RNA sequence: GGGAACGACUCGAGUAGAGUCGAAAACACAUUGCGUUCGCGCAAUGUGAACGAUCCGUUCGCGGAUCGACCACUGCUACGGCAGUGGAGACCGGUCUACGGACCGGUCACUCGACGUACGCGUCGAGAAGUUCAUCGUGAGAUGAACAGCCGCUCGUUCGCGAGCGGCAACUGUUGCGUGAGCAACAGACUCGUUGUCUUCGGACAACGAGACCUUGUCUUCGGACAAGGCCUGGGUCGCAGUAACCCCAGUUAACAAAACAAGUAAUGCCGCAUUCGUGCGGCAUAAAAGAAACAACAACAACAAC
Reactivity to DMS in 0.01 (KOAc 150mM, MgCl2 10mM, bicine 150mM(pH8.5), 24C), signal-to-noise 2, nucleotides 027 to 266: c010a010c000a010u000u000g000c000g030u000u020c190g010c000g000c000a010a000u010g000u000g010a080a160c010g010a030u010c010c000g000u000u040c170g000c000g000g010a000u020c000g000a200c000c000a000c000u010g020c000u020a100c230g000g020c010a020g030u000g000g010a100g000a010c010c000g020g000u000c000u010a100c140g050g020a000c010c000g010g010u010c000a000c030u020c000g000a030c010g020u000a080c220g020c000g000u000c000g000a010g000a120a140g000u010u000c000a000u000c000g000u010g000a090g000a010u000g010a020a000c000a180g030c000c010g030c010u000c000g000u000u020c170g000c010g060a000g020c020g000g030c010a010a030c030u010g000u000u000g000c020g020u020g010a180g010c000a010a000c000a010g000a190c040u010c010g040u000u000g000u000c000u000u000c170g000g020a000c000a010a000c020g040a000g020a040c010c000u020u000g020u000c010u000u000c180g000g010a010c000a000a010g000g020c300c020u000g000g000g000u000c020g000c070a030g000u010a120a070c130c010c010c020a010g000u000u030a020a170c080a010a010a040a000c050a010a160g020u020a200
Reactivity to 2A3 in 0.01 (KOAc 150mM, MgCl2 10mM, bicine 150mM(pH8.5), 24C), signal-to-noise 6, nucleotides 027 to 266: c010a000c000a000u000u000g010c010g020u040u070c240g020c000g000c120a000a000u000g000u000g010a050a020c020g000a000u000c010c010g010u040u040c270g010c020g080g000a000u000c000g010a010c000c000a000c010u010g000c010u030a090c220g150g000c010a000g000u010g010g000a010g000a000c000c000g000g000u010c020u040a140c270g090g000a000c000c000g000g000u010c000a010c000u000c000g010a010c000g010u050a030c230g010c000g090u010c000g000a010g030a030a040g000u000u000c000a000u000c000g010u030g070a080g000a020u000g000a000a000c000a010g000c010c000g010c010u000c000g050u080u070c260g030c020g090a000g000c000g000g000c010a010a050c000u000g000u000u000g010c020g030u080g080a060g030c000a000a000c010a000g050a260c000u000c010g000u000u000g000u000c010u030u050c230g120g000a000c000a000a000c000g000a000g010a000c000c000u000u000g010u000c000u020u070c230g100g000a000c000a000a000g000g010c010c010u010g010g000g000u020c030g010c070a030g030u090a040a050c030c010c000c010a030g060u110u080a030a020c030a040a060a010a000c020a030a040g210u240a120